[RMDB]
RNA sequence: GGGAACGACUCGAGUAGAGUCGAAAAGCCCGUCUGGGGAAUACACUACCUGACUUACCUGUAUGGUGGCAAGGGUUCGAAGAGGGAUCCCCGGGGAAACGUAGUCGAGCGAGGCGGAGAUCGAGCGCUAGCGCUUUAUGUUCGCAUAAAGCGCUAGAAAAGAAACAACAACAACAAC
Reactivity to DMS in 0.01 (KOAc 150mM, MgCl2 10mM, bicine 150mM(pH8.5), 24C), signal-to-noise 2, nucleotides 027 to 126: g000c010c000c020g000u000c040u000g020g000g000g000a020a100u000a140c100a080c060u010a090c000c010u000g000a240c070u000u000a060c040c050u030g000u000a140u000g000g020u000g000g010c070a050a230g020g000g020u010u000c090g000a060a080g010a170g000g000g010a130u000c000c000c010c010g020g010g000g010a020a090a090c070g030u000a050g000u000c040g000a100g010c060g000a080g010g000c010g020g000a140g000a060u000c040g010a040g010c140g010
Reactivity to 2A3 in 0.01 (KOAc 150mM, MgCl2 10mM, bicine 150mM(pH8.5), 24C), signal-to-noise 1, nucleotides 027 to 126: g030c000c000c010g130u040c040u120g000g000g010g030a050a050u100a210c110a030c000u040a050c010c000u040g110a120c020u140u100a040c020c000u130g130u300a110u300g060g000u010g020g050c040a020a070g060g000g020u140u170c070g090a020a000g060a290g060g070g070a050u030c000c000c000c060g020g000g010g020a030a080a000c030g040u050a020g130u090c040g030a050g020c030g030a000g000g030c020g010g000a060g030a030u080c050g010a020g000c050g020

An RNA of 177 nucleotides, treated with DMS and 2A3 and read out base by base. Conditions: 150 mM KOAc, 10 mM MgCl2 and 150 mM bicine (pH 8.5), 24 C. For DMS, 1,018 sequencing reads were counted.